An RNA of 177 nucleotides, treated with 2A3 and DMS and read out base by base. High 2A3 reactivity points to a flexible backbone, as in loops and unpaired stretches. For DMS, 1,467 sequencing reads were counted. The RNA was probed in 150 mM KOAc, 10 mM MgCl2 and 150 mM bicine (pH 8.5) at 24 C. For 2A3 the reverse transcriptase was SuperScript II with manganese.

RNA sequence: GGGAACGACUCGAGUAGAGUCGAAAAGGGUGAAGGUUAAUGACCGACGUCAGCAUGUGUGCCGCGCAUUCGGCUAUGGCGGUUUCCGAGCUCUCUGACAGGUCGCGCAGAAAGUAGUGCUCGAGACCACCUGGCUCUACUUCGGUAGAGCCAGGUGAAAAGAAACAACAACAACAAC
Reactivity to 2A3 in 0.01 (KOAc 150mM, MgCl2 10mM, bicine 150mM(pH8.5), 24C), signal-to-noise 2, nucleotides 027 to 126: g050g030g020u180g040a140a090g070g040u170u160a110a020u280g140a070c000c000g060a050c060g000u030c070a130g000c050a120u140g060u050g040u090g200c000c010g020c010g040c040a010u110u110c030g050g010c030u100a110u020g000g000c040g010g010u010u090u100c060c000g020a020g000c000u010c010u030c020u000g000a010c040a030g010g010u020c020g000c000g000c050a030g030a060a100a010g120u160a030g000u040g030c000u010c030g030a000g000a030c000
Reactivity to DMS in 0.01 (KOAc 150mM, MgCl2 10mM, bicine 150mM(pH8.5), 24C), signal-to-noise 1, nucleotides 027 to 126: g000g000g040u000g000a060a030g000g000u000u030a160a000u040g030a130c000c160g000a160c130g030u000c010a020g010c030a100u000g020u000g010u000g000c020c000g000c160g000c040a180u000u070c070g000g000c020u000a020u000g040g000c040g010g000u020u010u000c070c030g000a090g000c050u000c000u000c040u000g000a100c120a130g000g000u020c070g030c120g000c050a030g000a060a180a060g030u060a070g000u000g040c000u000c000g000a080g000a090c150

Reactivities are given for positions 27 through 126.